An RNA of 170 nucleotides, treated with 2A3 and DMS and read out base by base. Reactivities are given for positions 27 through 129. The DMS profile rests on 9,867 reads. For DMS the reverse transcriptase was MarathonRT. Source: RMDB library 15KLIB, as collected in RNAgym.
[RMDB]
RNA sequence: GGGAACGACUCGAGUAGAGUCGAAAAGCCCCCUCCCAGGAAUGGAGACGGGGGGAAAUCGACCGGGUCCCGCAGAACCCGAUGGAGUCCCCCGCCAUCCCCUGACGGAGAAAACUGGUCCCGAUAGUCAGCUACGGGUUCGCCCGUAGCAAAAGAAACAACAACAACAAC
Reactivity to 2A3 in 0.01 (KOAc 150mM, MgCl2 10mM, bicine 150mM(pH8.5), 24C), signal-to-noise 5, nucleotides 027 to 129: g010c000c000c000c000c000u000c010c000c000a000g020g040a050a110u250g010g000a040g000a060c020g000g000g000g000g020g040a010a050a090u020c010g040a020c020c000g000g000g020u030c040c050c050g080c040a060g030a060a010c010c000c000g000a010u060g040g010a020g060u030c020c010c000c020c000g000c000c010a090u020c010c010c000c000u010g020a090c090g010g000a020g000a050a020a000a010c050u050g030g030u030c010c000c010g050a090u080a070g090u160c100a030
Reactivity to DMS in 0.01 (KOAc 150mM, MgCl2 10mM, bicine 150mM(pH8.5), 24C), signal-to-noise 4, nucleotides 027 to 129: g030c040c010c040c110c050u050c010c010c010a040g020g020a060a050u070g050g000a120g040a000c150g010g050g000g020g000g030a000a040a050u020c010g010a070c000c000g020g010g060u030c040c040c150g000c170a000g020a020a000c080c010c030g040a080u000g070g000a040g030u000c000c000c040c020c020g030c030c030a120u000c030c010c070c020u030g000a180c130g010g020a080g010a060a030a080a090c080u050g000g000u000c030c030c000g020a160u060a090g050u050c170a110